[RMDB]
RNA sequence: GGGAACGACUCGAGUAGAGUCGAAAAGAUAUGGACCACCACAGAGUGAGGCUCCAGUAUCGGAAACGAUACGGAGCUCUCUGGGUGGUCCUAAGUCAAAACUCUUCGCAGUUCGCUGCGAAGAGAAGUUUAAGCUGAACUUCGGUUCAGCUUAAACAAAAGAAACAACAACAACAAC
Reactivity to DMS in 0.01 (KOAc 150mM, MgCl2 10mM, bicine 150mM(pH8.5), 24C), signal-to-noise 1, nucleotides 027 to 126: g010a010u010a300u020g000g000a010c010c000a010c000c000a100c000a010g000a020g010u010g000a090g020g000c000u000c010c000a170g030u000a000u000c010g020g000a160a040a130c000g010a000u000a010c010g000g020a010g020c000u000c010u000c000u010g020g000g000u000g000g010u000c000c010u000a010a050g010u010c030a110a130a080a220c000u000c000u000u000c000g050c000a010g000u000u010c290g010c010u010g000c000g000a000a010g000a000g000a010a060
Reactivity to 2A3 in 0.01 (KOAc 150mM, MgCl2 10mM, bicine 150mM(pH8.5), 24C), signal-to-noise 1, nucleotides 027 to 126: g020a030u060a050u120g000g030a030c020c020a050c010c030a300c000a220g030a030g090u300g270a200g180g090c030u010c000c070a060g000u000a010u020c020g000g000a090a010a040c000g000a000u000a000c000g020g000a000g000c000u050c020u010c000u010g010g020g000u000g000g000u010c000c000u020a000a000g010u000c000a000a000a020a040c000u020c000u000u000c010g000c000a020g040u100u100c200g070c090u000g000c000g000a000a000g000a000g000a000a000
Structure probing data (DMS and 2A3) for a 177-nucleotide construct. For DMS, 1,755 sequencing reads were counted. The 2A3 profile rests on 2,219 reads. The RNA was probed in 150 mM KOAc, 10 mM MgCl2 and 150 mM bicine (pH 8.5) at 24 C. 2A3 is a SHAPE reagent: it acylates the 2'-hydroxyl of flexible nucleotides of all four kinds.